[RMDB]
RNA sequence: GGGAACGACUCGAGUAGAGUCGAAAAGAUAUGGACUAAGGGAGUGGGAAUUUCGGAAACGAAAUGAUCCACGAGGAUCUUAGGUCCUAAGUCACGAGUUGAUUAGGAGUUCGCUCCUAAUCAACAACCUUCACUACUACUUCGGUAGUAGUGAAGGAAAAGAAACAACAACAACAAC
Reactivity to 2A3 in 0.01 (KOAc 150mM, MgCl2 10mM, bicine 150mM(pH8.5), 24C), signal-to-noise 3, nucleotides 027 to 126: g010a000u050a030u100g000g000a000c010u000a010a000g000g010g010a050g020u040g020g020g020a030a060u000u000u020c000g020g020a070a050a050c020g010a010a030a020u070g050a200u060c000c000a010c020g030a050g000g010a000u000c000u000u040a080g010g210u050c010c000u030a120a020g060u030c050a020c270g170a170g060u000u000g010a000u000u000a000g000g000a000g020u070u140c210g110c090u000c000c010u000a000a000u000c000a000a000c000a000a010
Reactivity to DMS in 0.01 (KOAc 150mM, MgCl2 10mM, bicine 150mM(pH8.5), 24C), signal-to-noise 4, nucleotides 027 to 126: g000a040u000a300u000g010g010a140c000u000a020a010g000g010g020a040g040u000g000g000g010a090a010u000u000u000c000g020g000a110a090a170c010g000a010a000a000u000g000a210u000c010c000a020c010g000a080g000g000a020u000c010u000u000a010g010g000u010c000c000u000a030a100g010u000c030a130c200g020a110g010u000u000g000a020u000u000a000g000g000a010g010u000u010c300g020c000u000c000c000u000a000a000u000c000a000a000c010a100a120